The record gives the reactivity of an RNA of 207 nucleotides to 2A3 and DMS.
For 2A3 the reverse transcriptase was SuperScript II with manganese.
For DMS, 3,410 sequencing reads were counted.
RNA sequence: GGGAACGACUCGAGUAGAGUCGAAAAGGCUGCGUAUCACUCUAGCGUACGUGAUAGUGCGAUAUAAGAAGCACUGGUACAUGCCGGCAGGGACAGUUAAGAGAUGGCCGCAGUCUCGUGUCCCUGCAAAAGGAGUUCUCGUUCGCGAGAACUCCAAUCUUUGUACAUGGUUCGCCAUGUACAAAGAAAAAGAAACAACAACAACAAC
Reactivity to 2A3 in 0.01 (KOAc 150mM, MgCl2 10mM, bicine 150mM(pH8.5), 24C), signal-to-noise 3, nucleotides 027 to 156: g020g020c030u040g030c110g030u010a020u050c020a020c040u050c040u070a030g020c000g040u020a020c020g030u050g100a140u120a130g010u010g000c030g030a030u060a010u050a240a090g130a110a040g030c030a020c050u020g000g000u060a040c030a040u140g030c010c000g020g020c010a010g000g010g010a000c000a090g010u120u180a190a070g010a020g000a030u060g060g060c110c040g040c100a030g020u000c000u000c000g020u020g000u020c020c000c010u000g000c000a000a000a000a010g000g000a000g000u010u000c010u000c000g030u060u040c210g010c010g110a000g000a000a000c000u000c000c000a000a000
Reactivity to DMS in 0.01 (KOAc 150mM, MgCl2 10mM, bicine 150mM(pH8.5), 24C), signal-to-noise 1, nucleotides 027 to 156: g030g020c020u010g020c070g010u000a050u000c010a060c000u000c050u000a060g000c080g020u000a070c120g060u010g000a110u010a040g040u000g000c000g000a140u000a100u000a100a100g010a120a220g000c020a050c060u020g030g010u000a050c090a080u000g030c010c020g040g000c010a030g000g030g020a020c010a070g020u020u000a090a100g010a020g030a060u000g010g000c080c130g010c080a260g010u000c000u010c000g010u000g000u000c000c000c000u000g000c030a010a020a040a150g020g000a030g030u000u000c000u000c000g010u010u010c200g040c010g010a040g000a020a030c000u000c000c010a010a050
Source: RMDB library M2RFPK, as collected in RNAgym. Conditions: 150 mM KOAc, 10 mM MgCl2 and 150 mM bicine (pH 8.5), 24 C.